[RMDB]
RNA sequence: GGGAACGACUCGAGUAGAGUCGAAAACGCUGGGUUUACCAGGACCGCACAAGGGAGCUGAAGCGCGCACGGCAUCGAUCUUGUGCUGUAGUCCGGUAAACCUGUGCUGAAGCGCGCACGGCAACCGAAAGGUGCGACACUAUCGUUCGCGAUAGAAGUACUAUCUGAUGUUCGCAUCAGAUAGUACAAAAGAAACAACAACAACAAC
Reactivity to 2A3 in 0.01 (KOAc 150mM, MgCl2 10mM, bicine 150mM(pH8.5), 24C), signal-to-noise 7, nucleotides 027 to 156: c030g010c010u050g000g000g000u000u000u000a010c010c020a300g040g000a040c100c030g010c000a000c000a000a000g040g020g020a030g010c010u050g030a280a030g040c010g010c010g000c020a020c020g010g000c010a080u300c100g040a010u010c010u000u000g000u000g000c010u020g060u110a080g000u000c000c000g000g000u000a000a000a000c010c000u000g010u020g000c020u060g020a130a050g000c010g000c000g000c010a010c020g030g000c050a080a050c030c020g110a120a040a020g010g010u030g010c010g040a030c040a010c090u030a010u010c010g050u130u060c230g010c010g120a010u010a010g080a120a020
Reactivity to DMS in 0.01 (KOAc 150mM, MgCl2 10mM, bicine 150mM(pH8.5), 24C), signal-to-noise 2, nucleotides 027 to 156: c040g000c070u010g080g000g000u000u000u010a040c020c010a150g110g020a030c000c100g010c000a030c010a030a020g010g010g010a110g080c020u000g010a060a040g000c000g020c010g010c050a300c060g030g020c000a190u000c180g000a070u000c020u000u000g000u000g010c030u010g020u000a080g010u000c000c000g010g010u000a010a010a020c010c010u000g000u000g000c010u010g010a170a070g000c020g010c000g030c020a300c020g000g030c050a120a190c020c020g030a070a090a150g030g040u000g030c040g020a210c040a160c010u000a010u010c010g010u010u000c220g040c030g000a040u000a000g000a070a260